[RMDB]
RNA sequence: GGGAACGACUCGAGUAGAGUCGAAAACAAACGGGUAUUACUUCAAUUGAUGCAAUGAUUCCAAUUGGACGUGGUCAACGUGAACUAAUUAUUGGGGAUCGUCAAACUGGUAAAACAUCAAUUGCUGCCAAGGUCGGUAUUUCGAUACCGACCUUGGAAAAGAAACAACAACAACAAC
Reactivity to DMS in 0.01 (KOAc 150mM, MgCl2 10mM, bicine 150mM(pH8.5), 24C), signal-to-noise 1, nucleotides 027 to 126: c070a020a070a080c220g000g000g000u000a110u040u000a300c010u030u000c000a000a000u000u000g000a000u010g000c070a070a040u000g060a250u040u030c000c010a020a000u020u000g010g010a000c040g000u000g030g000u010c070a040a040c070g030u000g100a190a180c130u000a100a110u030u000a130u010u000g020g000g010g000a030u010c010g000u000c050a070a040a020c070u010g000g000u010a060a120a140a200c060a020u000c050a010a010u000u000g000c120u000g000
Reactivity to 2A3 in 0.01 (KOAc 150mM, MgCl2 10mM, bicine 150mM(pH8.5), 24C), signal-to-noise 2, nucleotides 027 to 126: c050a030a050a020c050g070g020g050u200a070u230u160a110c060u050u010c010a030a000u000u000g000a010u000g020c110a140a050u080g040a050u140u060c000c000a040a070u050u100g090g020a010c060g090u150g010g060u060c010a000a000c070g050u030g090a070a000c000u090a140a160u220u160a110u230u140g000g000g020g020a040u010c000g000u010c020a000a000a110c020u010g010g020u040a020a040a000a010c000a000u020c010a000a000u010u000g060c020u070g040